Structure probing data (DMS and 2A3) for a 177-nucleotide construct. For DMS, 12,408 sequencing reads were counted. Conditions: 150 mM KOAc, 10 mM MgCl2 and 150 mM bicine (pH 8.5), 24 C.
RNA sequence: GGGAACGACUCGAGUAGAGUCGAAAAGACGGAAAAGAUCGAACCUAAGAAAAUCAGGAAGUGUGAGCCGAAUCCUAGGGCUCCUAGGGACGCAUCGUCCGAUGCGAAAUAAACACUAACGUCGAAACCACUAUACCUAGUUCGCUAGGUAUAGUGGAAAAGAAACAACAACAACAAC
Reactivity to DMS in 0.01 (KOAc 150mM, MgCl2 10mM, bicine 150mM(pH8.5), 24C), signal-to-noise 6, nucleotides 027 to 126: g010a040c030g000g010a090a050a100a080g000a070u010c060g010a060a150c020c030u010a080a060g010a120a070a090a080u010c110a090g000g010a090a050g010u000g010u000g000a060g020c070c060g000a090a060u010c020c020u000a060g000g000g030c110u030c010c050u020a040g000g010g010a210c020g010c010a020u000c000g010u060c160c170g000a010u010g010c020g000a050a060a090u020a080a090a050c030a020c060u000a090a170c040g000u000c050g000a090a120a150
Reactivity to 2A3 in 0.01 (KOAc 150mM, MgCl2 10mM, bicine 150mM(pH8.5), 24C), signal-to-noise 9, nucleotides 027 to 126: g020a000c020g050g060a050a070a070a070g060a030u110c060g020a060a080c000c010u060a120a060g090a100a120a040a080u140c070a030g100g080a090a050g090u060g020u070g080a020g030c000c040g050a050a020u040c020c020u030a040g030g050g070c030u040c030c000u040a020g010g010g010a010c000g010c010a010u010c010g210u120c120c190g000a020u010g000c000g080a050a050a080u180a030a070a000c040a010c050u070a140a020c010g030u020c030g050a060a000a010